Chemical mapping of a 177-nucleotide RNA with 2A3 and DMS. 2A3 adducts were read by reverse transcription with SuperScript II with manganese. High DMS reactivity at an A or C suggests that its Watson-Crick edge is free. For DMS the reverse transcriptase was MarathonRT. Conditions: 150 mM KOAc, 10 mM MgCl2 and 150 mM bicine (pH 8.5), 24 C.

RNA sequence: GGGAACGACUCGAGUAGAGUCGAAAAGAAAAGUCCGCGAAAGAAAAGGUGCGCAACAAACAAGCGCACCAACGGGGUACAGGACCGAAACCCCGCGAUUCGGUCGAAACAAAACGCGGACAAAGAAACUAUCCACUCAGUUCGCUGAGUGGAUAGUAAAAGAAACAACAACAACAAC
Reactivity to 2A3 in 0.01 (KOAc 150mM, MgCl2 10mM, bicine 150mM(pH8.5), 24C), signal-to-noise 2, nucleotides 027 to 126: g050a010a080a000a020g010u000c000c000g000c010g070a100a070a120g060a000a190a010a000g000g000u000g000c000g060c010a010a170c060a230a280a000c070a210a050g050c000g030c020a000c000c000a000a000c000g010g000g010g000u030a020c050a100g170g060a000c020c020g020a010a030a080c010c010c000c040g000c000g020a020u070u060c060g060g030u010c000g070a020a100a050c040a020a050a030a000c020g000c000g000g000a000c020a030a030a000g010a000a090
Reactivity to DMS in 0.01 (KOAc 150mM, MgCl2 10mM, bicine 150mM(pH8.5), 24C), signal-to-noise 2, nucleotides 027 to 126: g010a170a040a140a130g000u000c020c020g020c010g020a080a050a110g000a050a160a160a090g000g010u000g000c000g000c000a110a160c110a110a170a100c300a200a220g000c000g010c000a000c000c000a000a030c130g000g080g020g030u000a110c170a200g000g000a060c000c030g000a010a030a050c040c020c070c040g000c100g010a080u000u000c000g040g000u000c040g000a080a050a050c070a050a090a070a040c040g000c000g000g000a010c020a040a030a020g000a130a160